The data come from the RNA Mapping Database (RMDB), library OK1LIB. Structure probing data (2A3 and DMS) for a 177-nucleotide construct. In probing experiments dimethyl sulfate is read out at A N1 and C N3, which are open when not base-paired. For DMS, 3,474 sequencing reads were counted. For 2A3 the reverse transcriptase was SuperScript II with manganese.
RNA sequence: GGGAACGACUCGAGUAGAGUCGAAAAGGAAGAUACGGUUAUUGUUGGUAGGCAUGCUGUUAGAGAAGCGAUUAUUACUGGGCAUCCGAUAAAUAAGAUAUUGAUUCAAGAAGGUAUUAAAAAGCAAUCGCUAUUGUUAGUUCGCUAACAAUAGCGAAAAAGAAACAACAACAACAAC
Reactivity to 2A3 in 0.01 (KOAc 150mM, MgCl2 10mM, bicine 150mM(pH8.5), 24C), signal-to-noise 3, nucleotides 027 to 126: g020g000a030a030g020a090u170a120c100g050g000u000u120a060u030u200g030u080u000g040g060u040a100g000g070c050a030u070g020c010u040g020u050u060a040g050a030g020a200a030g070c060g010a020u010u100a050u090u020a190c030u030g000g050g000c030a020u010c030c040g010a040u090a090a030a010u100a050a020g050a040u030a040u070u170g090a060u060u040c010a050a010g020a080a030g120g030u090a080u070u200a120a050a060a060a000g080c060a060a020
Reactivity to DMS in 0.01 (KOAc 150mM, MgCl2 10mM, bicine 150mM(pH8.5), 24C), signal-to-noise 3, nucleotides 027 to 126: g010g020a080a080g010a060u020a100c090g000g000u020u000a080u020u000g050u000u010g000g030u000a070g020g010c100a120u020g020c060u000g040u010u000a050g000a080g020a120a060g020c060g010a090u030u000a060u020u000a040c100u010g040g030g000c040a020u030c030c000g000a070u000a060a060a050u030a100a120g030a060u000a090u010u000g040a070u000u000c120a090a050g010a110a110g000g010u000a080u000u010a010a050a060a060a160g010c100a100a070